[RMDB]
RNA sequence: GGGAACGACUCGAGUAGAGUCGAAAAGCAUGCUCAGGGUAAACUCCAGCAGGGCGGCGGCCGGGCCGGCCACCCCGGCCUGGGUGUGCGUCCGGGCCCCGUUCUCGAUGAGAAAGGCGAGGACGCGAUCGUUGGUCAUGUUCGCAUGACCAACGAUAAAAGAAACAACAACAACAAC
Reactivity to DMS in 0.01 (KOAc 150mM, MgCl2 10mM, bicine 150mM(pH8.5), 24C), signal-to-noise 1, nucleotides 027 to 126: g010c070a030u000g000c050u000c120a080g000g000g000u000a020a110a050c230u010c020c000a040g000c040a160g040g030g000c070g000g030c070g000g000c020c000g060g000g080c070c000g050g060c300c210a210c300c300c080c010g000g000c000c000u000g000g040g000u000g000u000g010c000g010u000c010c000g010g000g000c030c050c030c100g000u000u000c020u010c000g000a060u000g000a120g030a160a240a150g010g000c010g020a100g090g000a010c000g000c050g070